RNA sequence: GGGAACGACUCGAGUAGAGUCGAAAACAAAUUUCAGGAUUUUGCCUAAAUCCCCUUUGUAGUUCAGUAGCGCUUCAUUGAGUGUUUCACUUAACCGAAUUUUUGCUAAUAGCGAAGGCAUAGGCUAAUUAUAGCAGGGGUUCGCCCCUGCUAUAAUAAAAGAAACAACAACAACAAC
Reactivity to DMS in 0.01 (KOAc 150mM, MgCl2 10mM, bicine 150mM(pH8.5), 24C), signal-to-noise 1, nucleotides 027 to 126: c070a040a100a150u010u000u000c110a230g010g000a120u000u000u000u000g020c030c020u010a090a080a120u000c060c070c090c050u010u000u010g020u000a040g010u000u020c110a070g010u000a050g010c060g010c180u000u000c060a140u000u000g010a050g000u020g010u020u000u010c020a030c040u000u000a050a030c120c050g030a080a070u000u000u000u020u010g020c010u000a060a060u010a190g000c040g000a040a040g010g000c200a030u010a060g000g000c030u000a060